[RMDB]
RNA sequence: GGGAACGACUCGAGUAGAGUCGAAAAUCUACGACAUCAUCCAGGCAGCUAUGGAAGACAUUAGAGAAAACUACUUCUUCAACGUUUCGGAUAUCGACUUCAUAGAGUACGUCUUCCUGACGCACCUGAAUCCUUCUCGCGUGUCCGUGGACGAGCGCUUCCUCACUACUUUCGAGUAGUGAGGAAGAAAAGAAACAACAACAACAAC
Reactivity to 2A3 in 0.01 (KOAc 150mM, MgCl2 10mM, bicine 150mM(pH8.5), 24C), signal-to-noise 5, nucleotides 027 to 156: u020c020u020a040c050g040a010c010a060u080c020a050u060c150c020a020g030g000c070a060g020c150u020a020u070g000g000a000a000g000a000c030a050u140u230a090g020a020g060a110a070a100a020c050u120a080c010u100u070c010u130u100c090a090a020c120g050u030u040u070c050g050g070a060u070a130u290c030g030a050c030u070u040c090a100u120a150g030a020g050u050a070c070g000u020c010u000u010c000c000u000g020a010c060g000c000a010c000c010u000g010a010a010u050c020c000u170u130c090u060c080g060c060g030u040g030u010c060c080g040u060g040g040a040c060g030a030g080c050g020
Reactivity to DMS in 0.01 (KOAc 150mM, MgCl2 10mM, bicine 150mM(pH8.5), 24C), signal-to-noise 1, nucleotides 027 to 156: u000c020u010a110c010g030a090c050a080u010c030a080u010c010c000a030g050g080c010a110g020c040u000a130u000g000g010a070a030g000a040c070a140u000u000a120g020a190g000a070a090a080a150c080u000a090c110u000u000c030u030u000c080a080a040c080g020u000u000u000c020g010g000a140u020a100u000c030g000a040c050u000u010c070a160u000a190g000a090g030u000a050c060g010u000c000u010u010c040c060u000g000a140c090g030c070a030c000c000u020g000a030a050u010c050c090u000u000c040u000c030g020c070g010u000g000u000c000c030g000u000g000g060a070c050g010a210g010c050g000